[RMDB]
RNA sequence: GGGAACGACUCGAGUAGAGUCGAAAAGAUAAUUGACUACACGAAAUAAUAAAUUCGUUCGCCGAGUACUGAAUCGACGAUUUUAUCUCGCUUGAUUCGAGGUAUAGAUGAGAGUGGUCCAUAGUCAAUGGGGCGCAUUGUGUCGGAUGGAACACAAGUGACGUAUGAUCUUCGGAUCAUACGUCACAAAAGAAACAACAACAACAAC
Reactivity to 2A3 in 0.01 (KOAc 150mM, MgCl2 10mM, bicine 150mM(pH8.5), 24C), signal-to-noise 2, nucleotides 027 to 156: g060a010u220a080a080u030u060g040a000c010u120a030c120a010c040g080a110a000a040u180a080a040u070a000a280a000u020u080c010g030u110u030c050g140c240c050g060a070g060u040a080c160u130g020a000a050u030c010g030a030c000g030a000u040u000u170u170a170u020c020u020c040g130c220u050u090g020a040u030u110c050g080a060g000g060u090a060u040a040g200a050u080g010a010g000a000g100u020g080g060u020c040c020a030u030a050g060u040c000a050a020u080g000g040g000g000c070g000c030a000u000u200g010u000g050u080c010g010g180a120u110g100g020a120a000c030a000c010a180a000